[RMDB]
RNA sequence: GGGAACGACUCGAGUAGAGUCGAAAAUUAGAUAAGGUCAUGGGGUGAGGUAUGAUGGCACUGGUGACUUAUAAGAAGAGAAAGAGAAAUCUGAGCUGGCAUGCUCUUGCCCUCUCACUGUGUGAUGACUUCUCCAUGUCAUGAUGCAGCAAGAAGACCAUUACCGAUACUUCGGUAUCGGUAAUGGAAAAGAAACAACAACAACAAC
Reactivity to DMS in 0.01 (KOAc 150mM, MgCl2 10mM, bicine 150mM(pH8.5), 24C), signal-to-noise 1, nucleotides 027 to 156: u010u010a110g020a180u030a020a160g050g000u000c030a110u010g010g040g020g020u000g000a010g050g050u000a020u010g020a130u000g030g020c010a070c050u000g000g030u010g010a180c020u010u000a060u000a120a130g010a100a180g030a180g030a070a030a170g040a100g000a080a160a060u000c050u010g000a140g010c040u000g000g000c010a060u000g010c020u000c000u020u000g000c050c000c000u000c020u000c040a000c030u010g010u000g010u010g010a000u000g000a070c030u000u010c200u020c180c080a090u000g030u000c010a030u020g020a030u000g000c030a070g060c050a030a080g000a050a100g030a160
Reactivity to 2A3 in 0.01 (KOAc 150mM, MgCl2 10mM, bicine 150mM(pH8.5), 24C), signal-to-noise 3, nucleotides 027 to 156: u140u070a030g050a070u110a130a090g030g040u130c060a060u170g030g010g010g000u010g010a020g010g020u060a030u030g050a030u030g040g020c020a030c140u030g010g010u020g030a000c000u060u030a040u080a170a060g100a030a060g100a010g050a100a160a000g080a010g020a040a090a010u020c030u040g010a020g020c010u030g040g010c040a010u050g000c010u000c000u210u030g010c000c000c010u030c000u010c010a010c020u010g000u000g000u030g100a000u020g000a030c000u150u050c030u080c070c010a080u170g010u000c000a010u050g070a020u030g000c000a000g030c030a080a110g050a050a000g040a040